[RMDB]
RNA sequence: GGGAACGACUCGAGUAGAGUCGAAAAUAUACAUAAGAAUUCCGGUCUUUUCCGGAGCCACCAAGUGGAAUGCUACGAGCAUAAAUGCACGUAGCUAAAGACCCGAAGGCUAGCAAAAGCUAGCCAACCUACCACUAGGGUUCGCCCUAGUGGUAGGAAAAGAAACAACAACAACAAC
Reactivity to DMS in 0.01 (KOAc 150mM, MgCl2 10mM, bicine 150mM(pH8.5), 24C), signal-to-noise 2, nucleotides 027 to 126: u020a110u070a120c050a080u000a070a210g000a160a200u090u000c000c000g000g010u010c270u010u010u040u030c000c000g030g010a040g040c000c070a070c120c060a030a150g020u010g040g020a080a100u060g000c020u010a000c010g000a040g010c020a030u020a100a080a080u000g020c010a040c000g000u000a000g000c000u030a050a040a050g000a080c000c000c000g000a070a090g000g000c050u000a030g000c010a050a120a100a130g000c000u000a000g000c000c000a000a070
Reactivity to 2A3 in 0.01 (KOAc 150mM, MgCl2 10mM, bicine 150mM(pH8.5), 24C), signal-to-noise 4, nucleotides 027 to 126: u140a000u040a040c070a070u240a090a070g110a150a070u060u000c010c000g000g030u030c090u060u160u090u090c000c000g010g010a000g020c020c020a020c060c050a220a090g010u030g040g050a080a050u110g010c000u020a000c000g000a010g000c000a070u080a280a300a050u170g000c000a000c040g000u000a000g000c000u020a000a010a020g030a010c000c020c030g070a060a020g010g000c000u010a000g000c010a030a140a250a050g000c000u000a000g000c000c000a000a010